This 207-nucleotide RNA was probed chemically with 2A3.
RNA sequence: GGGAACGACUCGAGUAGAGUCGAAAAGGCCGCCUUCAACACAGCUCAGUGUGUUUACAACGCGACAUUCUCGCCGCAUUCACCGCUGACGAUCAUCAGUUGCAAUGGGUCGUCGCAUGUUAAUAUAUGGGAUAUUCGUGCUCCGCAGCCGCUCCAGAGCGGUGCGAGGAUUCGUCCUCGCACCGCUAAAAGAAACAACAACAACAAC
Reactivity to 2A3 in 0.01 (KOAc 150mM, MgCl2 10mM, bicine 150mM(pH8.5), 24C), signal-to-noise 1, nucleotides 027 to 156: g050g030c000c040g000c030c010u060u150c080a080a060c030a030c000a020g110c080u150c300a220g150u020g010u010g060u100u040u060a100c120a120a070c150g000c000g040a010c000a090u130u140c010u000c010g000c010c010g000c010a080u130u090c070a050c140c050g000c000u060g000a020c030g020a080u010c030a000u040c080a110g070u170u110g090c020a030a020u070g020g020g020u000c010g030u010c000g000c000a000u050g060u090u070a060a020u120a000u060a110u160g020g000g020a020u000a030u180u090c170g100u070g000c060u000c080c030g010c030a000g050c020c000g110c050u060c050c010a040g030
The data come from the RNA Mapping Database (RMDB), library OK3TST.